[RMDB]
RNA sequence: GGGAACGACUCGAGUAGAGUCGAAAAGAAAAAUACAACGCGCGGGUGAGUUAUUAAAAAUAUUUCCGCAGACAUACUUUCCAUCGUAACGCAGCGUUAACAAAAUACAGGUUGCGUUAACAACCAAUAUAUAAUCGUACUUCGGUACGAUUAUAUAAAAAGAAACAACAACAACAAC
Reactivity to 2A3 in 0.01 (KOAc 150mM, MgCl2 10mM, bicine 150mM(pH8.5), 24C), signal-to-noise 2, nucleotides 027 to 126: g010a010a100a000a010a000u180a050c060a070a040c080g040c040g050c030g040g040g040u240g100a100g060u100u100a090u070u150a020a080a030a030a030u090a080u030u090u020c000c000g040c020a010g060a020c040a030u130a060c020u030u050u020c060c030a110u120c150g090u020a020a000c000g020c060a030g000c050g080u080u080a070a020c090a040a090a070a000u260a060c060a010g100g090u020u020g000c020g000u010u010a040a020c010a010a000c020c000a050a070
Reactivity to DMS in 0.01 (KOAc 150mM, MgCl2 10mM, bicine 150mM(pH8.5), 24C), signal-to-noise 2, nucleotides 027 to 126: g010a020a120a100a060a080u000a050c050a080a080c090g000c140g030c030g020g010g010u010g000a040g010u000u000a040u010u020a010a050a080a090a040u000a060u000u020u010c030c000g040c030a130g040a100c070a050u000a050c090u000u000u000c010c020a090u000c170g010u000a010a090c010g010c020a020g010c010g000u000u010a060a090c160a100a050a080a180u000a050c210a090g040g010u010u010g010c020g020u020u000a030a080c060a020a050c080c050a060a150